RNA sequence: GGGAACGACUCGAGUAGAGUCGAAAACCUGCACAUCCCGGGCGACUCCCGGUUAGGCUGGCGCCGUGCGCCCUUCCCCCGGGGGAUCGCUCCUGGGUGUCCGGGGAGCCGCAUAGCCGACAGCCGUUGAAUCAUUUUUCUUCGGAAAAAUGAUUCAAAAAGAAACAACAACAACAAC
Reactivity to 2A3 in 0.01 (KOAc 150mM, MgCl2 10mM, bicine 150mM(pH8.5), 24C), signal-to-noise 3, nucleotides 027 to 126: c000c000u010g000c050a030c010a010u040c000c000c010g000g010g000c020g010a010c010u010c000c000c020g020g000u030u110a040g000g000c010u010g000g010c030g010c060c190g100u180g030c050g020c020c000c010u060u110c020c000c000c010c000g000g000g000g000g020a100u030c010g010c030u090c000c000u000g000g000g000u020g010u020c040c000g010g000g000g010a020g050c020c000g030c030a080u060a030g020c010c020g040a030c020a010g020c000c020g020u010
Reactivity to DMS in 0.01 (KOAc 150mM, MgCl2 10mM, bicine 150mM(pH8.5), 24C), signal-to-noise 3, nucleotides 027 to 126: c000c000u010g000c230a130c050a000u010c000c000c250g030g030g000c010g000a010c000u000c000c030c000g000g010u000u070a060g000g040c300u000g010g010c060g060c040c290g000u020g000c040g000c030c020c090u030u030c040c010c140c000c010g020g000g000g000g020a060u000c010g000c010u000c000c000u000g010g000g000u000g000u010c050c020g000g010g010g000a100g010c110c030g010c030a040u020a090g000c040c020g020a070c050a060g000c020c050g040u020

An RNA of 177 nucleotides, treated with 2A3 and DMS and read out base by base. For DMS, 3,104 sequencing reads were counted. For DMS the reverse transcriptase was MarathonRT. Reactivities are given for positions 27 through 126. For 2A3, 4,407 sequencing reads were counted. Source: RMDB library RFM100, as collected in RNAgym.